[RMDB]
An RNA of 177 nucleotides, treated with DMS and 2A3 and read out base by base. Source: RMDB libraries RFM100 and RFMREP, as collected in RNAgym. The reactions ran in a buffer of 150 mM KOAc, 10 mM MgCl2 and 150 mM bicine (pH 8.5), at 24 C. High DMS reactivity at an A or C suggests that its Watson-Crick edge is free.

RNA sequence: GGGAACGACUCGAGUAGAGUCGAAAACUCAGACUAUGGUUAAGGCCCCUAAAUACUGGAUAAGUGUAAGGGAGUCUUUGGCCCAAGACAAUGGGAAGGUGGGCUUAGAAGCAGCCACCCUUUAACGGCAAUUGGCUAAAUUCGUUUAGCCAAUUGCAAAAGAAACAACAACAACAAC
Reactivity to DMS in 0.01 (KOAc 150mM, MgCl2 10mM, bicine 150mM(pH8.5), 24C), signal-to-noise 5, nucleotides 027 to 126: c010u000c010a130g010a170c100u000a070u030g000g020u020u000a020a020g000g000c020c010c000c000u030a040a150a030u000a010c010u000g000g030a140u030a100a030g010u000g020u010a100a120g000g000g010a090g030u000c000u000u000u020g020g020c010c000c140a080a070g000a080c200a130a080u000g000g010g010a090a030g000g000u000g000g010g010c000u010u010a090g020a120a180g020c210a110g010c000c000a040c000c000c010u000u000u010a060a100c280g000
Reactivity to 2A3 in 0.01 (KOAc 150mM, MgCl2 10mM, bicine 150mM(pH8.5), 24C), signal-to-noise 5, nucleotides 027 to 126: c000u020c030a010g080a090c080u140a090u260g040g010u020u030a010a000g010g000c000c000c000c010u030a140a190a080u090a050c000u050g170g010a180u120a300a030g020u040g020u020a000a050g000g000g020a130g020u030c000u000u000u020g020g000c000c000c000a030a030g080a040c080a110a090u150g090g010g030a060a040g040g010u080g040g110g000c020u060u050a130g020a190a030g080c030a000g030c000c000a040c020c000c010u010u150u100a110a030c050g020